[RMDB]
RNA sequence: GGGAACGACUCGAGUAGAGUCGAAAAGCACGCUGGGCUUCGGGAUCGACCGGAUAAAUGCCCGGAACGCCUCCGGGGACCGGUGUGCCAUCAAGUCCUCGUACGCGGAGGCCGUGGGGUCGCUGGGCGGGGAGUGCUAUUUCGAUAGCACUCCCCGAAAAGAAACAACAACAACAAC
Reactivity to 2A3 in 0.01 (KOAc 150mM, MgCl2 10mM, bicine 150mM(pH8.5), 24C), signal-to-noise 1, nucleotides 027 to 126: g000c010a010c030g010c000u010g020g010g030c000u000u000c040g000g000g030a040u020c010g020a010c010c000g000g070a040u080a140a290a020u280g050c000c000c000g000g000a140a040c010g040c000c010u030c000c020g000g010g000g000a000c000c010g000g000u000g000u000g000c010c000a120u220c080a010a030g000u000c000c030u000c020g000u060a080c040g070c020g070g000a020g040g030c010c000g050u130g000g050g010g000u050c000g000c000u050g020g000g060
Reactivity to DMS in 0.01 (KOAc 150mM, MgCl2 10mM, bicine 150mM(pH8.5), 24C), signal-to-noise 1, nucleotides 027 to 126: g000c010a020c000g000c030u000g000g010g000c020u030u000c050g000g040g020a100u010c010g000a300c000c020g000g000a150u040a060a150a170u030g000c120c010c000g000g030a040a070c070g020c140c150u010c000c000g020g000g030g020a000c000c030g000g030u000g000u000g000c000c060a100u040c130a040a080g000u000c000c000u030c050g060u070a060c190g000c040g040g020a120g030g000c080c030g070u030g000g010g030g090u000c010g010c000u060g000g000g050